RNA sequence: GGGAACGACUCGAGUAGAGUCGAAAAGGCGGCGGCGGCAGGACCGAGCGCGGCAGGCGGCUGGCCCAGCGCAGCCAGCGCGGCCCGAAGGACGGGAGCAGGCGGCCGAGCACCGAGCGCUGGGCACCGGGCACCGAGCGGCGGCGGCACGCGAGGACCUAAUGCGUAAUUUCGAUUACGCAUUAGGAAAAGAAACAACAACAACAAC
Reactivity to 2A3 in 0.01 (KOAc 150mM, MgCl2 10mM, bicine 150mM(pH8.5), 24C), signal-to-noise 1, nucleotides 027 to 156: g070g000c120g030g000c050g010g040c070g040g050c050a050g060g000a030c010c020g100a060g040c030g000c000g050g010c040a050g030g050c040g010g000c030u110g070g030c010c000c000a000g000c000g000c010a000g090c050c050a040g010c040g020c010g000g050c000c030c010g100a130a110g140g030a040c100g010g050g000a070g060c040a050g130g190c100g030g000c020c000g000a010g000c030a050c080c070g050a000g000c010g000c000u000g000g000g000c000a000c000c010g020g000g000c040a020c000c020g010a030g020c000g050g000c000g000g030c000g000g010c070a000c060g000c000g000a020g040g030a010

Chemical mapping of a 207-nucleotide RNA with 2A3. It was measured as part of the RMDB library OK3TST. The RNA was probed in 150 mM KOAc, 10 mM MgCl2 and 150 mM bicine (pH 8.5) at 24 C. For 2A3 the reverse transcriptase was SuperScript II with manganese.